[RMDB]
An RNA of 177 nucleotides, treated with 2A3 and DMS and read out base by base. 2A3 is a SHAPE reagent: it acylates the 2'-hydroxyl of flexible nucleotides of all four kinds. The RNA was probed in 150 mM KOAc, 10 mM MgCl2 and 150 mM bicine (pH 8.5) at 24 C.
RNA sequence: GGGAACGACUCGAGUAGAGUCGAAAAUGUGUAGUGAGCAUGGUGGGUAUGAAAUGACAACUUUAUUGUCUUUCCUGUCAAAGAACUUGUAGGCUGGUUGGGGGAAAGAGACCAUUUCAAUAUGAAGCAUCUGACGCUGAUUCGUCAGCGUCAGAUGAAAAGAAACAACAACAACAAC
Reactivity to 2A3 in 0.01 (KOAc 150mM, MgCl2 10mM, bicine 150mM(pH8.5), 24C), signal-to-noise 1, nucleotides 027 to 126: u000g080u020g030u010a000g000u010g130a060g140c030a050u060g100g040u070g070g100g060u070a090u260g050a020a050a020u180g000a000c000a040a040c000u280u300u210a070u110u130g000u050c000u040u010u020c000c020u030g050u050c010a030a040a040g070a060a120c020u100u100g040u040a030g060g030c040u070g000g060u020u070g020g060g000g030g000a040a000a000g080a030g000a040c040c040a030u030u050u080c100a150a150u240a110u270g070a060a010g080
Reactivity to DMS in 0.01 (KOAc 150mM, MgCl2 10mM, bicine 150mM(pH8.5), 24C), signal-to-noise 1, nucleotides 027 to 126: u010g010u000g000u000a070g020u010g020a090g010c030a040u000g010g010u000g000g050g000u000a030u000g010a030a020a080u040g000a040c030a030a060c260u000u010u010a060u000u000g010u010c000u000u000u000c030c120u010g010u000c090a030a050a090g010a040a080c080u000u000g030u000a030g010g030c080u000g000g000u010u000g000g020g000g010g040a030a040a080g000a030g000a080c110c060a060u000u010u000c040a080a130u000a110u000g010a110a100g000